The record gives the reactivity of an RNA of 207 nucleotides to 2A3. For 2A3, 2,207 sequencing reads were counted. 2A3 adducts were read by reverse transcription with SuperScript II with manganese. Reactivities are given for positions 27 through 156. It was measured as part of the RMDB library OK3TST.
RNA sequence: GGGAACGACUCGAGUAGAGUCGAAAACGUCUCGUCGCUCAUCACAGACUCGGCUGUGGAGAUAGCCAAGGCCAAAUCGGCCGCCACUCCGUUUUUUGAGAUGCCCACGAGGAGCGGCGAGGGGGAGGCCGCGGAAGUGAGUGAGGCAGAGCGCCGCGUAUGGUAGGCGAUUCGUCGCCUACCAUACAAAAGAAACAACAACAACAAC
Reactivity to 2A3 in 0.01 (KOAc 150mM, MgCl2 10mM, bicine 150mM(pH8.5), 24C), signal-to-noise 3, nucleotides 027 to 156: c030g120u020c000u000c020g020u010c010g000c010u010c010a070u050c010a060c020a050g090a090c050u050c040g020g000c120u040g030u040g040g040a070g020a100u200a030g070c060c060a110a060g000g000c000c000a080a150a220u170c070g020g000c020c010g010c000c000a010c010u010c000c000g000u000u000u000u010u110u170g110a150g000a030u130g040c010c020c010a040c060g050a080g060g000a010g000c000g000g000c000g000a020g000g000g000g000g000a030g020g000c030c030g020c010g040g040a060a000g060u060g080a040g000u070g010a060g050g000c020a030g020a040g060c050g020c010c000g050c040